[RMDB]
RNA sequence: GGGAACGACUCGAGUAGAGUCGAAAACAACGCCACAUCCGAAUGGAUCCAGGGCAAGUACCUGCGCCGCAUCCCGGUCACGCCUCAAGGGAUCGAGCUAACAUGGGGAAACAACGCGCCGAUGCACCACGGAGACAGGAUUCGUCCUGUCUCCGUGAAAAGAAACAACAACAACAAC
Reactivity to 2A3 in 0.01 (KOAc 150mM, MgCl2 10mM, bicine 150mM(pH8.5), 24C), signal-to-noise 1, nucleotides 027 to 126: c020a000a050c030g030c000c010a030c010a030u000c010c020g210a140a080u300g030g030a040u040c070c040a060g020g000g000c010a020a010g010u030a030c000c000u030g030c050g000c060c000g010c040a060u020c020c010c010g050g010u040c050a030c100g030c000c030u120c090a060a080g100g000g010a050u030c010g020a030g060c000u050a060a050c000a110u150g000g000g010g000a070a060a000c040a020a000c040g030c000g010c060c040g020a040u110g000c030a080c050
Reactivity to DMS in 0.01 (KOAc 150mM, MgCl2 10mM, bicine 150mM(pH8.5), 24C), signal-to-noise 3, nucleotides 027 to 126: c090a080a140c110g010c020c000a060c090a030u000c000c020g010a160a090u020g000g000a030u010c070c120a080g020g000g020c060a090a150g020u020a080c050c010u000g000c070g020c080c050g030c150a040u000c020c030c010g020g010u020c080a050c170g010c060c040u020c080a150a180g000g020g020a030u000c030g000a130g000c040u010a080a060c130a070u020g020g000g000g000a090a050a080c090a080a080c090g040c060g050c020c030g000a080u000g010c100a070c130
The record gives the reactivity of an RNA of 177 nucleotides to 2A3 and DMS.
The 2A3 profile rests on 2,124 reads.
The RNA was probed in 150 mM KOAc, 10 mM MgCl2 and 150 mM bicine (pH 8.5) at 24 C.